Chemical mapping of a 177-nucleotide RNA with 2A3. The reactions ran in a buffer of 150 mM KOAc, 10 mM MgCl2 and 150 mM bicine (pH 8.5), at 24 C.

[RMDB]
RNA sequence: GGGAACGACUCGAGUAGAGUCGAAAAACACCGCCUCGAGCUACGGCUCGAGGCGGUGAGUUUUGGAACCAUUCGAAACAACACAGCUCUAAAACACGUCAUAGGCCAGUACGCUGGCCUAUGACGAAUAUUAUCGUCCUUUCGAGGACGAUAAUAUAAAAGAAACAACAACAACAAC
Reactivity to 2A3 in 0.01 (KOAc 150mM, MgCl2 10mM, bicine 150mM(pH8.5), 24C), signal-to-noise 2, nucleotides 027 to 126: a020c000a010c000c000g100c010c030u030c000g040a010g030c020u020a010c200g100g000c000u080c080g020a000g030g040c000g010g010u000g000a010g000u000u000u000u070g080g030a050a060c010c000a000u040u080c050g010a030a030a000c030a090a000c030a020c000a040g040c000u050c020u080a020a050a060a020c010a020c000g000u000c000a000u000a000g000g000c000c000a010g010u020a040c100g020c040u000g000g010c020c000u000a000u000g020a000c000g000a000